RNA sequence: GGGAACGACUCGAGUAGAGUCGAAAACAGAACUGGAUGGGCCGUGUGCUUAACCAGGACAAGAUCACCUUCUCUCCAACGUUGUUGCCAACUCAUGAUUCUCCUAACCUGUGCUUGGAGAGACGUGCUACCAUAUAGGUGUUCGCACCUAUAUGAACAACAACUAUAAGUUCGCUUAUAGUUGUUGAAAAGAAACAACAACAACAAC
Reactivity to DMS in 0.01 (KOAc 150mM, MgCl2 10mM, bicine 150mM(pH8.5), 24C), signal-to-noise 3, nucleotides 027 to 156: c060a090g000a120a180c030u000g000g020a160u000g020g000g040c020c040g010u000g000u000g040c030u000u000a030a100c030c030a020g000g020a150c070a060a100g010a120u010c020a080c050c060u000u000c010u000c000u030c000c000a060a120c080g000u000u000g000u000u000g000c010c030a080a130c040u020c050a080u000g000a160u000u010c010u000c030c020u000a070a080c020c060u000g020u000g010c060u000u000g000g010a040g010a040g010a030c080g020u000g000c050u000a120c090c000a030u000a010u000a010g010g030u010g020u000u010c300g020c010a000c000c000u010a020u000a010u010g000a080a190
Reactivity to 2A3 in 0.01 (KOAc 150mM, MgCl2 10mM, bicine 150mM(pH8.5), 24C), signal-to-noise 3, nucleotides 027 to 156: c050a000g040a100a060c000u020g020g020a090u060g070g010g000c070c090g200u100g180u300g080c010u040u030a100a050c010c000a010g030g040a000c050a040a090g050a140u130c040a050c040c000u080u060c020u010c000u000c040c020a090a050c090g000u000u010g010u040u050g090c050c040a100a100c090u030c100a050u080g050a180u120u000c070u010c010c010u050a090a120c020c060u150g050u130g090c080u040u030g010g000a020g000a000g020a020c010g030u040g010c030u100a130c040c000a000u000a000u000a000g000g010u010g050u020u040c210g020c030a000c000c000u010a010u000a000u000g010a000a010

Background
This 207-nucleotide RNA was probed chemically with DMS and 2A3. The reactions ran in a buffer of 150 mM KOAc, 10 mM MgCl2 and 150 mM bicine (pH 8.5), at 24 C. DMS adducts were read by reverse transcription with MarathonRT.